[RMDB]
The data come from the RNA Mapping Database (RMDB), library RFMREP. Chemical mapping of a 177-nucleotide RNA with 2A3 and DMS. 2A3 adducts were read by reverse transcription with SuperScript II with manganese. The RNA was probed in 150 mM KOAc, 10 mM MgCl2 and 150 mM bicine (pH 8.5) at 24 C.
RNA sequence: GGGAACGACUCGAGUAGAGUCGAAAAAUACUGUGCGGUGAACAUUCUAGUAGGCCGCCUCAACAGAGGACGUCUAUGAAUGGUGAGGGAGCCAACCCUUGUAAUUGCAAAGCGUGGUUUUAAUACCGUAAUCAGUUAACUUCGGUUAACUGAUUACAAAAGAAACAACAACAACAAC
Reactivity to 2A3 in 0.01 (KOAc 150mM, MgCl2 10mM, bicine 150mM(pH8.5), 24C), signal-to-noise 3, nucleotides 027 to 126: a000u120a020c030u020g010u020g020c010g010g070u060g030a060a010c000a020u030u000c040u060a090g060u010a030g070g030c030c060g060c000c000u030c030a240a300c100a070g010a000g010g000a030c010g000u000c010u010a030u170g000a030a010u030g010g040u080g010a020g020g010g000a030g020c040c030a030a080c040c000c010u000u010g030u050a060a100u090u090g030c050a060a040a030g020c020g010u030g000g040u050u040u050u090a150a100u080a080c010c030
Reactivity to DMS in 0.01 (KOAc 150mM, MgCl2 10mM, bicine 150mM(pH8.5), 24C), signal-to-noise 5, nucleotides 027 to 126: a050u010a040c030u000g010u010g020c000g020g010u000g000a090a110c010a020u010u000c030u010a180g010u000a020g020g010c040c190g010c020c000u010c010a140a130c300a150g010a010g000g000a100c090g030u000c000u000a030u010g000a010a020u000g000g010u010g010a030g010g000g000a100g000c200c300a080a120c000c010c010u000u000g010u010a100a030u000u000g010c040a040a060a060g000c080g020u000g010g010u000u000u010u000a050a140u010a100c120c060